Chemical mapping of a 177-nucleotide RNA with DMS.
The reactions ran in a buffer of 150 mM KOAc, 10 mM MgCl2 and 150 mM bicine (pH 8.5), at 24 C.
Reactivities are given for positions 27 through 126.
For DMS the reverse transcriptase was MarathonRT.
It was measured as part of the RMDB library TTRINS.
For DMS, 1,182 sequencing reads were counted.

RNA sequence: GGGAACGACUCGAGUAGAGUCGAAAAGAUAUGGAGGCACUUCGCUGAUGACCUAUACGAAACCCUACUUAAUCGGAAACGAUUAAGUAGGGUUUCUGUAUAGCAAGGCGAUGUGCCUCCUAAGUCACCGAUGGAGUAUGUUCGCAUACUCCAUCGGAAAAGAAACAACAACAACAAC
Reactivity to DMS in 0.01 (KOAc 150mM, MgCl2 10mM, bicine 150mM(pH8.5), 24C), signal-to-noise 1, nucleotides 027 to 126: g000a010u000a300u010g000g010a020g010g040c000a030c000u000u000c010g000c000u000g000a240u020g010a120c300c000u000a010u000a000c010g010a010a030a030c000c000c000u000a000c000u000u000a000a000u000c010g010g010a160a140a290c000g000a000u000u000a000a000g040u000a000g000g000g020u000u000u000c000u030g050u000a000u000a000g000c070a080a180g000g020c030g000a010u000g010u000g000c000c000u000c010c000u000a020a080g010u000c010a270